The record gives the reactivity of an RNA of 177 nucleotides to 2A3 and DMS. The reactions ran in a buffer of 150 mM KOAc, 10 mM MgCl2 and 150 mM bicine (pH 8.5), at 24 C. For DMS the reverse transcriptase was MarathonRT. 2A3 is a SHAPE reagent: it acylates the 2'-hydroxyl of flexible nucleotides of all four kinds.

RNA sequence: GGGAACGACUCGAGUAGAGUCGAAAAGAAAGUCCAAUCGAGCCCGGGGAUAGCUGGUUCCCCCCGAGACAUACCGCAGUAUGACCCGUCCGGAGGUUGGCGGUGGGGUAGAGCACUGAUAGGAGGAACGGUAUCAUGCUUUCGAGCAUGAUACCGUAAAAGAAACAACAACAACAAC
Reactivity to 2A3 in 0.01 (KOAc 150mM, MgCl2 10mM, bicine 150mM(pH8.5), 24C), signal-to-noise 1, nucleotides 027 to 126: g100a020a140a000g130u060c030c050a010a030u080c040g040a000g000c040c030c040g000g040g000g000a040u090a010g080c040u000g050g010u000u000c040c020c020c020c000c020g070a060g070a070c050a070u070a000c000c000g080c000a020g040u050a230u170g040a070c000c000c000g000u020c050c130g000g060a030g000g070u020u060g020g000c160g020g040u070g000g000g000g030u070a070g000a000g010c030a010c030u000g000a000u180a040g010g010a000g000g000a080
Reactivity to DMS in 0.01 (KOAc 150mM, MgCl2 10mM, bicine 150mM(pH8.5), 24C), signal-to-noise 1, nucleotides 027 to 126: g000a040a090a080g000u020c010c000a070a050u000c030g010a100g000c000c060c050g000g000g010g040a100u080a060g000c110u020g030g020u000u000c040c070c010c040c030c000g030a030g070a090c110a150u000a030c000c070g030c070a110g000u020a160u070g000a100c030c000c000g050u010c080c000g000g000a150g010g020u000u020g020g010c050g000g000u000g000g000g030g020u030a080g000a080g000c000a080c090u000g000a090u000a110g000g000a100g000g000a130